Structure probing data (DMS and 2A3) for a 177-nucleotide construct. 2A3 adducts were read by reverse transcription with SuperScript II with manganese. Reactivities are given for positions 27 through 126.
RNA sequence: GGGAACGACUCGAGUAGAGUCGAAAAUAAACAAUGUGGACAAUGAAAUUGUUAAGUCUUCAGAUGUUGUAGACAGCAAUGAAAAUUUAACAUGGCCACUUGUUUUAGAAUGCACUAGGGCAUCCACCUCAAUAAACAACUUCGGUUGUUUAUUGAGAAAAGAAACAACAACAACAAC
Reactivity to DMS in 0.01 (KOAc 150mM, MgCl2 10mM, bicine 150mM(pH8.5), 24C), signal-to-noise 3, nucleotides 027 to 126: u000a010a010a020c000a010a010u020g020u000g010g020a040c050a060a120u020g010a150a130a100u010u000g010u000u010a000a010g020u000c030u000u000c000a020g000a140u000g020u000u000g020u000a140g020a180c040a020g010c020a020a170u000g000a000a000a030a020u000u000u000a000a010c010a050u000g020g000c000c000a000c010u000u000g000u000u000u000u000a080g000a090a030u000g000c020a110c110u000a100g010g010g010c010a020u000c020c030a100c250
Reactivity to 2A3 in 0.01 (KOAc 150mM, MgCl2 10mM, bicine 150mM(pH8.5), 24C), signal-to-noise 3, nucleotides 027 to 126: u040a000a000a000c020a000a050u230g000u000g000g030a020c020a100a160u200g100a150a080a080u100u000g020u010u020a040a010g010u000c000u020u010c010a050g060a300u060g030u060u020g030u020a120g090a210c040a010g010c000a010a000u000g010a000a020a010a010u030u040u010a010a000c010a020u020g030g020c000c000a000c000u000u000g020u010u000u000u000a020g010a030a010u070g010c040a020c190u200a100g050g100g000c000a010u000c010c020a040c010